[RMDB]
RNA sequence: GGGAACGACUCGAGUAGAGUCGAAAAGCGGAGAUGUUCGCAUCUCCGCAAAUCCCUGGAUGCAGCGAGUUAAAACGGAUACGUUGGCAAGUAACCAUCGCAAAAGUAUUAGCUUCGGCUAAUACAAGUCAUACAGCAUCUUCGGAUGCUGUAUGACAAAAGAAACAACAACAACAAC
Reactivity to DMS in 0.01 (KOAc 150mM, MgCl2 10mM, bicine 150mM(pH8.5), 24C), signal-to-noise 1, nucleotides 027 to 126: g010c000g010g000a000g020a000u000g010u000u000c200g010c030a020u000c010u000c000c010g050c020a020a020a010u000c010c000c000u010g000g000a080u000g010c070a300g000c020g000a150g030u000u010a050a160a090a060c060g000g020a140u000a030c040g000u010u000g000g000c080a030a150g000u000a080a100c290c020a000u010c060g010c110a040a120a120a050g000u000a000u000u000a010g000c010u000u020c110g010g000c000u000a000a000u000a010c000a100a070
Reactivity to 2A3 in 0.01 (KOAc 150mM, MgCl2 10mM, bicine 150mM(pH8.5), 24C), signal-to-noise 1, nucleotides 027 to 126: g020c010g000g050a000g020a000u020g030u070u100c180g030c090a010u050c000u000c000c000g030c000a000a000a000u010c000c000c020u020g090g020a000u050g000c060a040g050c030g030a040g050u080u150a180a090a020a090c070g080g010a100u100a140c030g050u090u090g050g010c050a030a060g070u000a020a030c030c010a010u060c050g000c230a200a010a000a000g000u020a010u020u010a000g000c030u030u070c270g050g000c000u010a000a000u000a000c000a030a010

About this RNA: This 177-nucleotide RNA was probed chemically with DMS and 2A3. DMS adducts were read by reverse transcription with MarathonRT.